[RMDB]
RNA sequence: GGGAACGACUCGAGUAGAGUCGAAAAAGCCAGCUGGUUUCGUUACAGACGCAGCCCGAACGCGUGCAAAAUGCGAUGUAUAACGCUUCGCAGCAGCUGCAACAAAUUCGCAGUCGUCUGGAUGGGAGUUCUAGGAAUUGUUCGCAAUUCCUAGAACAAAAGAAACAACAACAACAAC
Reactivity to DMS in 0.01 (KOAc 150mM, MgCl2 10mM, bicine 150mM(pH8.5), 24C), signal-to-noise 5, nucleotides 027 to 126: a060g000c010c010a140g030c130u010g000g000u000u000u000c020g010u000u000a130c000a020g010a020c010g010c040a170g020c170c160c010g000a040a030c090g020c300g000u000g010c020a030a050a110a090u000g010c000g000a040u000g010u000a080u010a130a130c260g000c010u000u000c010g000c020a040g010c160a160g000c170u000g020c000a040a070c040a060a190a120u000u000c010g020c050a150g030u010c010g000u000c010u000g000g010a040u000g010g010g020a160
Reactivity to 2A3 in 0.01 (KOAc 150mM, MgCl2 10mM, bicine 150mM(pH8.5), 24C), signal-to-noise 3, nucleotides 027 to 126: a010g070c030c010a050g030c090u150g070g060u010u040u030c010g020u030u060a100c000a010g020a000c010g000c020a020g000c050c030c010g020a040a020c040g010c020g000u010g000c000a000a120a000a050u030g010c010g020a010u020g030u020a160u030a200a040c130g000c000u020u020c000g000c000a020g020c020a020g020c030u030g000c010a130a040c010a030a150a020u020u010c000g000c030a020g090u280c010g000u000c010u010g040g010a060u030g040g070g010a120
This 177-nucleotide RNA was probed chemically with DMS and 2A3. Values cover nucleotides 27 to 126. Conditions: 150 mM KOAc, 10 mM MgCl2 and 150 mM bicine (pH 8.5), 24 C. The data come from the RNA Mapping Database (RMDB), library OK2TST. The DMS profile rests on 4,036 reads.